[RMDB]
Background: This 207-nucleotide RNA was probed chemically with 2A3.
RNA sequence: GGGAACGACUCGAGUAGAGUCGAAAAACGCAGCGCGGGCGGCUGCCAAGUCCGCCACCGACAUCGCCGCGAAGGCCGACUCCGAGGGCCGUCCCCUCUCCGAGGCCGAGCGCACCGACUACACCGCCGCGAUGGCGAAGGGCCGGGACCUGCUCGAGGUCCCAUAAGAUUUCGAUCUUAUGGGACCAAAAGAAACAACAACAACAAC
Reactivity to 2A3 in 0.01 (KOAc 150mM, MgCl2 10mM, bicine 150mM(pH8.5), 24C), signal-to-noise 1, nucleotides 027 to 156: a000c020g000c000a000g000c030g010c030g070g000g020c050g010g030c040u130g090c080c080a030a000g010u010c010c000g020c010c030a100c030c040g070a110c060a140u190c050g030c020c010g000c030g100a160a040g060g060c020c040g030a030c010u010c030c000g030a080g050g010g000c030c020g040u060c010c000c000c000u030c010u000c000c100g050a060g070g000c030c010g000a010g010c010g000c010a020c010c000g040a030c000u210a060c110a070c020c020g030c070c010g020c040g040a040u210g010g030c010g000a060a110g040g010g000c000c000g010g010g010a060c010c030u120g000c010u050c010g070a040
For 2A3, 964 sequencing reads were counted.
2A3 adducts were read by reverse transcription with SuperScript II with manganese.
Values cover nucleotides 27 to 156.
The RNA was probed in 150 mM KOAc, 10 mM MgCl2 and 150 mM bicine (pH 8.5) at 24 C.